An RNA of 177 nucleotides, treated with 2A3 and DMS and read out base by base. High DMS reactivity at an A or C suggests that its Watson-Crick edge is free.

[RMDB]
RNA sequence: GGGAACGACUCGAGUAGAGUCGAAAAGGCGUCUUCGCUGCCUCGGCCGCCUUGCACUGACCGGUAGCCGCCGUAAUCGCGGCAUUGUUCCCAUAAAGGGAUGUGGGUGUGGGUGGCGAAGUAGCAGCGCAUCAUAAAUAUUCGUAUUUAUGAUGCGAAAAGAAACAACAACAACAAC
Reactivity to 2A3 in 0.01 (KOAc 150mM, MgCl2 10mM, bicine 150mM(pH8.5), 24C), signal-to-noise 9, nucleotides 027 to 126: g100g020c040g080u040c040u080u060c060g000c010u010g000c000c000u030c030g190g050c020c010g010c020c010u060u220g020c030a030c030u080g120a060c040c020g040g030u080a040g010c010c010g000c010c020g060u100a060a050u180c070g000c000g000g000c000a000u020u150g020u050u030c010c000c000a020u200a050a110a020g020g000g010a030u080g050u090g100g000g020u040g010u070g020g020g000u010g000g000c000g000a010a000g000u050a020g000c020a020g040
Reactivity to DMS in 0.01 (KOAc 150mM, MgCl2 10mM, bicine 150mM(pH8.5), 24C), signal-to-noise 9, nucleotides 027 to 126: g010g010c070g000u000c030u000u000c090g010c010u000g010c010c020u000c120g020g020c050c010g010c020c020u000u010g030c030a040c030u000g010a250c050c090g010g010u000a150g010c010c010g020c000c100g010u010a100a080u010c300g000c010g010g010c000a060u000u010g000u000u000c000c010c000a150u010a050a100a210g000g000g000a070u000g010u000g010g000g020u000g010u010g000g000g020u000g000g010c010g010a010a020g010u000a100g030c010a150g010